[RMDB]
RNA sequence: GGGAACGACUCGAGUAGAGUCGAAAAGAAUUCUUCUUCCACUCUCAGCAUGUUCGACCAACAAUAAGAUGGAUUGCUGCUUCAUGCUCUCUGCCAGAAGUAGAGACUCUUGUGGCCAGACAGGAGGGUGCUUAGUCUGGUUCGCCAGACUAAGCACAAAAGAAACAACAACAACAAC
Reactivity to 2A3 in 0.01 (KOAc 150mM, MgCl2 10mM, bicine 150mM(pH8.5), 24C), signal-to-noise 1, nucleotides 027 to 126: g030a020a200u110u020c040u070u010c000u060u000c030c010a060c010u000c000u000c000a030g010c030a100u050g010u100u050c080g080a080c050c020a060a050c020a110a100u210a240a010g050a090u090g010g100a020u030u120g030c050u000g010c000u000u050c010a060u050g070c000u060c020u000c050u090g070c000c000a030g030a120a000g080u080a010g020a020g030a030c010u050c000u010u080g030u020g080g050c000c020a030g040a090c020a000g000g040a030g010g070
Reactivity to DMS in 0.01 (KOAc 150mM, MgCl2 10mM, bicine 150mM(pH8.5), 24C), signal-to-noise 1, nucleotides 027 to 126: g010a170a110u010u010c030u000u030c080u010u000c070c000a090c090u000c010u000c060a120g000c040a060u000g000u000u000c090g010a080c090c010a100a070c130a100a070u020a060a040g030a140u000g010g000a070u040u000g040c020u000g000c030u010u000c080a110u000g050c040u000c060u010c090u010g010c030c140a180g000a050a180g000u000a070g000a060g000a150c080u010c020u000u010g010u000g030g010c140c050a070g000a060c080a060g000g010a040g010g000